[RMDB]
RNA sequence: GGGAACGACUCGAGUAGAGUCGAAAAAGAAAUAGCGAUUCUCGAAGGAGUUGAGUCCUUCGAGGAUUGCUAAGGAAAGAUGCAGAACUAUCAAUGAACGACUUUGCUCAUCUUUGUAUACAAAAAACAAUCGUAACAACUUCGGUUGUUACGAUUGAAAAGAAACAACAACAACAAC
Reactivity to 2A3 in 0.01 (KOAc 150mM, MgCl2 10mM, bicine 150mM(pH8.5), 24C), signal-to-noise 2, nucleotides 027 to 126: a000g110a020a060a020u060a000g000c000g040a000u000u000c000u000c000g000a000a000g030g030a020g020u190u190g220a130g120u000c000c000u000u000c000g000a000g010g000a000u000u000g000c010u020a030a000g030g030a140a010a000g020a010u030g040c080a020g020a170a070c030u050a090u180c040a010a210u230g060a120a040c030g050a030c080u080u050u070g000c030u030c010a040u000c010u000u040u040g040u020a160u020a080c090a000a060a000a020a040a000
Reactivity to DMS in 0.01 (KOAc 150mM, MgCl2 10mM, bicine 150mM(pH8.5), 24C), signal-to-noise 2, nucleotides 027 to 126: a050g000a070a100a140u000a000g020c000g000a010u000u000c000u010c000g020a030a010g030g010a040g010u000u030g000a200g010u000c000c000u000u010c000g010a020g020g000a000u010u000g000c010u000a000a060g010g040a040a030a070g020a000u010g000c130a050g000a050a050c070u010a100u000c070a110a150u010g010a100a070c120g000a050c060u000u000u000g000c010u000c000a030u000c010u000u020u020g030u000a050u000a080c080a010a030a060a070a030a080
About this RNA:
The record gives the reactivity of an RNA of 177 nucleotides to 2A3 and DMS. For 2A3 the reverse transcriptase was SuperScript II with manganese. DMS adducts were read by reverse transcription with MarathonRT. For DMS, 1,540 sequencing reads were counted. In probing experiments dimethyl sulfate is read out at A N1 and C N3, which are open when not base-paired.